[RMDB]
RNA sequence: GGGAACGACUCGAGUAGAGUCGAAAACCACUCCUUUCCGAGAGCGGAUUUUGCGCCUGAUCCGCGGGUUGAGCGCGUCGUUGAGGCCAUCCCCGAUGAGAUUGAGCGCCAGCACGGUGAGGACGAUGGCAGUGAGGACUUUCGAGUCCUCACUGCCAAAAGAAACAACAACAACAAC
Reactivity to 2A3 in 0.01 (KOAc 150mM, MgCl2 10mM, bicine 150mM(pH8.5), 24C), signal-to-noise 3, nucleotides 027 to 126: c000c000a040c040u030c000c000u070u060u040c000c000g180a160g020a050g160c040g040g050a120u120u030u180u300g030c060g010c000c000u030g010a000u000c000c000g050c050g000g000g030u080u150g060a080g100c210g010c020g040u040c070g020u160u270g120a080g070g050c000c000a000u020c000c020c000c080g070a160u080g090a080g000a050u040u020g000a020g010c000g010c000c000a020g000c010a000c000g010g000u000g000a020g070g000a000c060g060a080u100
Chemical mapping of a 177-nucleotide RNA with 2A3.
Values cover nucleotides 27 to 126.
The data come from the RNA Mapping Database (RMDB), library OK1LIB.